[RMDB]
RNA sequence: GGGAACGACUCGAGUAGAGUCGAAAAGGAGAUCGAAGAUGACCGACGUCAGCACGGUCGGGAUGUAGGUCCGCAUGCAUCCAAGUUGACGAAACUUUACGAUUUCCAAAGCGGACAAGAAGUCAAACACCUCAUGCAGCUUCGGCUGCAUGAGGUGAAAAGAAACAACAACAACAAC
Reactivity to 2A3 in 0.01 (KOAc 150mM, MgCl2 10mM, bicine 150mM(pH8.5), 24C), signal-to-noise 1, nucleotides 027 to 126: g000g000a010g000a020u000c060g040a120a060g030a210u300g060a000c010c030g000a030c130g040u230c080a000g020c160a000c030g000g000u000c000g060g040g000a000u000g000u000a000g010g020u000c000c020g000c010a000u000g000c000a000u000c000c000a000a080g000u000u010g000a100c180g010a050a000a020c070u080u020u080a040c120g050a020u030u000u030c000c000a100a190a000g000c040g000g000a000c000a080a010g110a030a010g040u070c030a150a050a000